[RMDB]
RNA sequence: GGGAACGACUCGAGUAGAGUCGAAAAGAAGAAAGAAAAACCGGAAAGAAAACGGUAAGACGCAACAGUCCACAAAAAGAAGAGAAAGUGUGGCUGGAAGAAACCGAACCGGUAAUUGCGUAAGAAAAUCAGUCCCGAUAUUCGUAUCGGGACUGAUAAAAGAAACAACAACAACAAC
Reactivity to DMS in 0.01 (KOAc 150mM, MgCl2 10mM, bicine 150mM(pH8.5), 24C), signal-to-noise 2, nucleotides 027 to 126: g000a120a070g010a070a170a130g010a020a060a040a040a010c020c010g030g000a170a050a120g030a100a120a040a120c040g000g020u010a090a100g020a030c080g010c090a160a090c000a020g000u010c000c000a050c030a010a040a080a110a100g000a180a220g010a140g000a170a170a050g000u000g010u010g050g010c000u000g000g000a070a010g000a090a140a040c000c030g000a020a020c060c020g000g070u000a010a000u030u000g000c070g000u000a050a160g000a030a060a050
Reactivity to 2A3 in 0.01 (KOAc 150mM, MgCl2 10mM, bicine 150mM(pH8.5), 24C), signal-to-noise 2, nucleotides 027 to 126: g140a000a070g070a010a130a000g080a040a040a000a000a000c000c000g010g130a150a160a000g190a010a140a020a010c000g020g040u110a010a100g090a060c010g000c040a010a020c000a020g020u080c030c000a000c070a000a140a010a030a000g130a030a030g060a030g030a030a160a020g060u010g030u070g020g000c000u000g090g010a020a060g100a090a110a000c030c020g010a010a040c000c020g000g000u010a010a120u040u020g000c020g010u040a080a020g060a040a080a000